[RMDB]
Structure probing data (DMS and 2A3) for a 170-nucleotide construct.
RNA sequence: GGGAACGACUCGAGUAGAGUCGAAAAAUCAGGUAGUCACAUAUCCCUCGCUUAACUACGCUGGGGCUUUGUGGGACAUUACAGUUAUAAACAAUGUGGACAAUGAAAUUGUUAAGUCUUCAGAUGUACGCACCGAACUUCGGUUCGGUGAAAAGAAACAACAACAACAAC
Reactivity to DMS in 0.01 (KOAc 150mM, MgCl2 10mM, bicine 150mM(pH8.5), 24C), signal-to-noise 4, nucleotides 027 to 129: a050u080c090a000g030g020u000a090g000u010c040a040c030a000u030a090u000c040c050c010u000c290g040c090u050u020a060a040c100u010a090c270g020c060u020g000g000g000g000c090u000u000u000g020u090g000g000g000a000c070a000u000u000a040c000a140g020u040u040a110u060a060a060a110c050a040a030u000g000u040g020g010a050c080a060a070u000g000a050a050a140u000u000g030u000u000a090a130g010u000c000u040u010c050a060g010a110u030g010u010a060c170g030
Reactivity to 2A3 in 0.01 (KOAc 150mM, MgCl2 10mM, bicine 150mM(pH8.5), 24C), signal-to-noise 5, nucleotides 027 to 129: a050u080c020a000g080g000u050a000g080u010c000a010c000a000u050a070u060c000c000c000u010c040g010c030u180u230a270a090c090u070a010c160g000c010u040g020g000g000g000c010u010u010u020g020u020g010g030g050a020c030a020u090u150a030c030a010g050u110u100a220u090a130a090a040c040a070a000u100g020u060g100g000a000c000a040a030u110g060a110a040a140u130u040g110u080u110a060a030g000u030c000u030u020c040a020g030a140u110g030u060a000c070g000
It was measured as part of the RMDB library 15KLIB. The reactions ran in a buffer of 150 mM KOAc, 10 mM MgCl2 and 150 mM bicine (pH 8.5), at 24 C. The 2A3 profile rests on 7,028 reads.